[RMDB]
RNA sequence: GGGAACGACUCGAGUAGAGUCGAAAAGUACUACCGUUCGCGGUAGUACAAAUAAUCCAGCCUGGAAAGGCUGGAGCCUAAACUAUGGUAAAGGCACCAUAGAAAGAGCAGAGUUCGCUCUGCUCAAGCAGGAUACAUGGUUCGCCAUGUAUCCUGCAAAAGAAACAACAACAACAAC
Reactivity to 2A3 in 0.01 (KOAc 150mM, MgCl2 10mM, bicine 150mM(pH8.5), 24C), signal-to-noise 2, nucleotides 027 to 126: g000u000a000c000u000a000c030c010g040u020u050c280g000c000g130g010u000a000g010u000a030c010a030a010a000u050a000a000u000c000c000a000g020c010c000u080g080g180a190a070a040g020g030c000u000g000g000a000g020c000c000u060a090a080a070c010u030a010u020g000g000u080a100a110a270g250g030c090a010c000c000a000u000a000g050a070a130a010g010a000g000c000a000g000a000g010u060u110c170g020c080u020c000u000g000c010u010c000a000a010
Reactivity to DMS in 0.01 (KOAc 150mM, MgCl2 10mM, bicine 150mM(pH8.5), 24C), signal-to-noise 1, nucleotides 027 to 126: g000u000a000c000u040a000c000c000g020u030u000c260g000c030g010g000u000a010g000u010a000c000a040a050a060u000a170a100u000c000c000a010g010c000c000u030g010g030a150a200a000g010g000c000u010g000g000a010g000c000c010u000a060a140a230c000u000a000u000g040g010u000a040a150a140g000g060c140a040c010c000a010u000a030g000a080a080a060g000a020g000c000a010g000a010g010u000u000c300g010c000u000c000u010g000c000u000c000a000a080